The record gives the reactivity of an RNA of 207 nucleotides to 2A3 and DMS. For 2A3 the reverse transcriptase was SuperScript II with manganese. Reactivities are given for positions 27 through 156. The DMS profile rests on 2,421 reads. The RNA was probed in 150 mM KOAc, 10 mM MgCl2 and 150 mM bicine (pH 8.5) at 24 C. Source: RMDB library OK3TST, as collected in RNAgym.
RNA sequence: GGGAACGACUCGAGUAGAGUCGAAAACUAAGCAAUUUACAAGAAUUAGCUUAUUUAAUUCUCAUAAUAAGACUCCAGGCAGAUAUUGUAGCUGUCUCUAUUUUGCAGACGAAGAGGCUGAGGCAUGAAAAAGUUAUUGCCCAUGUCAUAGAACUAAAGAAAUAUGGUAAUUCGUUACCAUAUUUCUAAAAGAAACAACAACAACAAC
Reactivity to 2A3 in 0.01 (KOAc 150mM, MgCl2 10mM, bicine 150mM(pH8.5), 24C), signal-to-noise 3, nucleotides 027 to 156: c020u040a010a000g000c010a010a050u080u150u180a260c080a080a110g120a120a050u050u050a090g000c020u020u010a040u070u140u060a100a090u130u020c010u010c020a060u120a270a030u070a180a040g030a050c030u060c040c090a030g020g010c000a000g060a080u060a050u180u130g090u110a050g050c030u010g030u020c000u000c010u050a070u060u130u080u110g040c010a010g020a090c030g050a100a070g030a030g060g000c050u080g040a060g040g040c010a020u060g090a150a030a000a020a000g060u120u060a080u070u080g010c000c000c000a030u110g030u040c010a020u050a150g070a060a060c080u150a070a160
Reactivity to DMS in 0.01 (KOAc 150mM, MgCl2 10mM, bicine 150mM(pH8.5), 24C), signal-to-noise 2, nucleotides 027 to 156: c060u000a040a030g030c010a090a050u000u000u000a160c120a080a140g000a030a070u010u010a060g000c120u000u010a140u000u000u010a050a090u010u000c010u020c000a160u000a070a160u010a090a100g010a100c020u000c020c030a110g030g010c020a040g010a100u010a050u000u020g000u000a100g020c000u010g020u000c000u000c030u010a030u000u000u000u000g030c040a090g010a150c130g000a090a100g010a090g040g010c010u010g000a060g010g000c030a090u000g010a030a090a100a070a160g000u000u000a090u020u000g010c000c040c090a130u010g000u020c020a070u010a140g010a090a110c100u010a080a120